[RMDB]
RNA sequence: GGGAACGACUCGAGUAGAGUCGAAAAGAUAUGGAGCGAAUGUAGUGGAACUACUUAUACGAAUCGGAAACGAUUCGAUAAGCCACUACACAAUUCGCUCCUAAGUCAAAGGUUGCUUCGGCAACCACGCAAUGAUCUUGUUCGCAAGAUCAUUGCGAAAAGAAACAACAACAACAAC
Reactivity to DMS in 0.01 (KOAc 150mM, MgCl2 10mM, bicine 150mM(pH8.5), 24C), signal-to-noise 1, nucleotides 027 to 126: g000a080u030a300u040g000g000a100g000c000g040a050a100u000g000u000a010g000u000g000g030a100a000c000u010a300c030u000u000a000u000a160c000g030a000a000u010c010g020g000a240a070a270c000g000a050u000u000c000g000a060u010a010a000g010c010c000a040c000u000a010c030a050c220a300a240u000u000c010g000c000u000c000c000u010a000a140g000u030c070a090a080a150g000g000u000u000g000c000u000u000c300g040g000c010a000a030c000c000a040
Reactivity to 2A3 in 0.01 (KOAc 150mM, MgCl2 10mM, bicine 150mM(pH8.5), 24C), signal-to-noise 2, nucleotides 027 to 126: g030a020u120a020u140g000g000a000g020c010g010a020a020u050g010u000a000g030u020g030g060a050a060c140u300a020c000u300u000a000u080a190c010g010a000a000u000c000g000g060a000a070a070c030g000a000u010u000c000g000a000u000a000a020g070c010c000a010c000u000a000c000a000c010a010a170u010u030c000g000c010u000c000c010u000a040a030g020u010c070a110a050a120g040g000u000u010g010c000u090u160c300g160g050c000a010a010c050c010a000